RNA sequence: GGGAACGACUCGAGUAGAGUCGAAAACAUCGGGGUGCUCGCCCCGUGCGUUGCGCUGGUCGCGGUGCUCGGCGAUCAGACCGCAUAUUUCAUCGGGCGACGGAUCGGGCCGGCGCUGUUCAAGAAGACCGCACCGAAAUUUCGAUUUCGGUGCGGUAAAAGAAACAACAACAACAAC
Reactivity to 2A3 in 0.01 (KOAc 150mM, MgCl2 10mM, bicine 150mM(pH8.5), 24C), signal-to-noise 1, nucleotides 027 to 126: c000a010u080c020g010g000g010g000u030g130c030u060c140g010c030c000c000c000g000u080g020c030g070u140u080g050c000g000c030u000g000g000u000c080g000c120g280g000u060g010c000u020c050g070g010c050g050a010u000c000a000g110a030c010c030g070c000a010u020a120u050u110u080c080a130u080c030g020g010g000c000g000a100c060g010g000a070u080c030g000g020g020c030c020g010g010c000g000c000u010g130u000u030c110a110a120g000a030a030g090
Source information:
Chemical mapping of a 177-nucleotide RNA with 2A3. It was measured as part of the RMDB library OK1LIB. The 2A3 profile rests on 454 reads. Conditions: 150 mM KOAc, 10 mM MgCl2 and 150 mM bicine (pH 8.5), 24 C.